[RMDB]
RNA sequence: GGGAACGACUCGAGUAGAGUCGAAAAGAUUCGGCGGCCCUGUCAUGAGGCCGAAACGAAGGCACGUACCCCUUCGAAUGGCGUCGGGGAGUCAGCGGCUAUAUAUGCGCCUCAUGCUGGCAUCCGGGAGAACCCUCAUCCUUCGGGAUGAGGGUAAGAAUCUACUGUUCUUCGGAACAGUAGAUUCAAAAGAAACAACAACAACAAC
Reactivity to DMS in 0.01 (KOAc 150mM, MgCl2 10mM, bicine 150mM(pH8.5), 24C), signal-to-noise 2, nucleotides 027 to 156: g000a270u000u000c020g010g010c050g020g030c020c030c070u000g010u000c130a090u010g010a060g000g030c000c000g020a040a050a080c040g010a090a080g000g000c030a060c070g000u000a240c020c030c020c010u000u000c030g030a200a270u000g010g000c160g030u000c110g010g010g020g000a090g010u000c130a120g030c060g030g000c020u020a130u020a130u010a090u000g010c140g000c010c020u010c010a070u000g000c040u000g010g000c030a040u020c010c010g000g010g020a120g010a120a050c000c000c010u000c000a050u000c000c000u000u000c300g030g000g000a010u010g020a000g020g000g010u000a000a030
Reactivity to 2A3 in 0.01 (KOAc 150mM, MgCl2 10mM, bicine 150mM(pH8.5), 24C), signal-to-noise 4, nucleotides 027 to 156: g070a050u080u050c020g010g000c020g040g010c030c010c040u030g130u200c010a010u000g010a020g030g010c110c030g010a020a010a010c090g050a110a100g010g010c040a060c170g060u050a040c010c000c000c010u000u020c030g130a250a170u190g140g040c050g010u020c020g000g000g020g010a040g140u160c090a020g020c010g020g000c040u010a010u000a030u010a000u300g100c130g000c020c000u000c010a000u010g000c000u010g000g000c040a020u000c000c000g020g020g000a120g050a020a030c010c000c000u020c000a000u000c000c000u040u070c160g110g000g000a000u000g000a000g000g000g000u000a000a000